[RMDB]
This 177-nucleotide RNA was probed chemically with 2A3 and DMS.
The reactions ran in a buffer of 150 mM KOAc, 10 mM MgCl2 and 150 mM bicine (pH 8.5), at 24 C.
RNA sequence: GGGAACGACUCGAGUAGAGUCGAAAAGUUCUGCAUUAAUGCCACAGUGGGGAUGGAGGCCAGGCCGUGGCCAGAGCAGAUACGUAGGCCCAUGAAAUUGAUGAACUGAGAGUUGCUUCCAGUCCUGUAUACGAAAUGUGUUCGCACAUUUCGUAUAAAAAGAAACAACAACAACAAC
Reactivity to 2A3 in 0.01 (KOAc 150mM, MgCl2 10mM, bicine 150mM(pH8.5), 24C), signal-to-noise 8, nucleotides 027 to 126: g010u000u010c000u020g010c010a080u070u200a140a030u190g000c010c000a030c010a050g050u080g030g050g010g030a050u100g090g040a050g050g040c020c010a050g040g060c010c020g020u030g010g000c020c010a020g010a000g030c010a000g010a030u140a060c020g030u050a070g040g030c000c000c020a030u130g060a040a080a040u200u180g050a080u100g020a070a030c030u050g010a020g010a000g230u080u150g020c040u030u000c000c000a030g040u070c010c020u120g020
Reactivity to DMS in 0.01 (KOAc 150mM, MgCl2 10mM, bicine 150mM(pH8.5), 24C), signal-to-noise 7, nucleotides 027 to 126: g010u000u010c000u000g020c020a090u020u010a100a130u030g000c000c010a030c030a070g030u010g010g010g030g010a110u010g020g010a090g010g010c020c050a120g020g020c040c030g030u000g010g010c010c120a130g000a100g000c030a020g000a040u030a020c030g000u010a110g000g010c010c010c010a110u020g010a090a050a140u010u020g000a080u010g000a090a050c040u000g000a100g010a070g010u010u010g000c060u000u000c020c010a050g020u000c030c030u010g010